[RMDB]
RNA sequence: GGGAACGACUCGAGUAGAGUCGAAAACCCCUGUCCGGCUCGCGGAAAGGUUGUUGUUACGACGAAGCGAACGUCCGAAGAAGAUGAACCGAAGAAGGUGUCGUUCCAGUUUCCGGUGAGCAGCCCAAUGAUCACCUGGAUUCGUCCAGGUGAUCAUAAAAGAAACAACAACAACAAC
Reactivity to DMS in 0.01 (KOAc 150mM, MgCl2 10mM, bicine 150mM(pH8.5), 24C), signal-to-noise 1, nucleotides 027 to 126: c070c000c000c040u020g020u050c030c020g050g000c030u000c000g000c080g000g000a000a040a030g010g000u000u000g030u000u010g000u000u000a150c150g000a070c070g010a170a160g000c020g020a080a150c020g000u000c040c100g000a080a120g060a090a060g010a060u020g000a110a020c110c020g000a090a150g040a140a110g000g030u000g040u000c000g000u000u000c000c020a040g010u000u000u000c000c030g000g000u060g070a080g000c040a050g060c030c050c040a140